The record gives the reactivity of an RNA of 177 nucleotides to DMS and 2A3. The reactions ran in a buffer of 150 mM KOAc, 10 mM MgCl2 and 150 mM bicine (pH 8.5), at 24 C. Values cover nucleotides 27 to 126. The 2A3 profile rests on 5,705 reads.
RNA sequence: GGGAACGACUCGAGUAGAGUCGAAAACACCAGCCCGAGGUUACGACACGAAUGGGCUGGUACGAAUGACGUAUAGCUCUUGCAGCAGCGUGUCGAAGCGUACCCGAGCUAUACGCCUGGGGUGGUGGAGAUUGUUUAGUUUCGACUGGACAAUCUCAAAAGAAACAACAACAACAAC
Reactivity to DMS in 0.01 (KOAc 150mM, MgCl2 10mM, bicine 150mM(pH8.5), 24C), signal-to-noise 1, nucleotides 027 to 126: c130a020c000c000a020g000c010c000c010g010a100g000g000u010u000a080c090g000a050c000a050c000g000a300a300u060g000g000g000c000u000g000g000u000a000c260g000a300a300u020g020a080c010g020u000a000u010a020g020c000u000c020u020u020g020c080a070g020c000a080g020c010g000u020g010u010c060g000a110a100g000c040g030u030a100c090c070c090g000a020g030c010u000a020u000a020c020g000c000c000u000g000g000g010g020u000g000g000u010g010
Reactivity to 2A3 in 0.01 (KOAc 150mM, MgCl2 10mM, bicine 150mM(pH8.5), 24C), signal-to-noise 2, nucleotides 027 to 126: c040a000c000c000a000g060c000c000c000g080a050g020g040u050u080a050c080g000a000c060a000c090g110a210a090u250g000g000g000c000u000g000g000u000a000c000g010a050a170u140g030a020c000g000u010a000u000a030g000c000u000c000u040u110g040c030a040g000c000a010g020c030g000u020g030u060c040g020a080a000g000c000g000u030a070c010c040c000g000a000g000c000u000a000u000a040c020g010c000c000u020g010g000g000g000u040g030g040u050g070